RNA sequence: GGGAACGACUCGAGUAGAGUCGAAAAGCACUAGAGGGCGUAACGGCUGGGUGUAACCCAACUCUAGGUGUGCUGAUUAGCGGGUUUGACUCCGUAACAAAUAGGCACUGGUGGUAAAAAGCAUCCCUGACCAUAUACAUCUUCGGAUGUAUAUGAAUGGUACAUUAAAGUUCGCUUUAAUGUACCAAAAAGAAACAACAACAACAAC
Reactivity to DMS in 0.01 (KOAc 150mM, MgCl2 10mM, bicine 150mM(pH8.5), 24C), signal-to-noise 5, nucleotides 027 to 156: g030c010a070c030u010a050g010a070g010g000g020c040g020u010a150a130c250g020g020c010u000g020g010g020u010g030u010a080a300c010c010c000a040a050c010u000c020u000a050g010g020u010g020u010g000c010u000g000a170u000u010a130g000c030g010g000g040u000u000u000g010a130c190u000c010c040g010u000a080a110c090a070a070a110u000a140g000g000c020a030c040u000g000g020u010g030g010u010a030a060a060a090a070g030c060a140u000c010c010c020u000g010a160c200c000a020u010a020u000a020c010a010u000c000u000u000c300g030g020a040u000g010u000a020u000a010u010g000a040a100
Reactivity to 2A3 in 0.01 (KOAc 150mM, MgCl2 10mM, bicine 150mM(pH8.5), 24C), signal-to-noise 2, nucleotides 027 to 156: g010c000a010c030u010a010g000a020g000g010g010c010g030u070a090a030c060g100g000c010u020g000g000g020u040g040u060a070a060c000c000c010a020a020c010u020c000u020a040g060g040u040g010u010g060c020u020g010a120u040u100a040g020c020g000g030g030u040u100u190g060a050c040u020c050c000g010u020a010a010c010a010a090a040u150a050g020g010c020a010c050u060g070g040u080g010g040u110a060a060a050a010a000g010c000a030u010c000c010c000u030g050a020c020c000a000u000a000u000a000c000a000u010c000u020u040c120g100g010a000u010g000u000a000u000a000u000g000a020a060
The record gives the reactivity of an RNA of 207 nucleotides to DMS and 2A3. It was measured as part of the RMDB library M2RFPK. For 2A3 the reverse transcriptase was SuperScript II with manganese.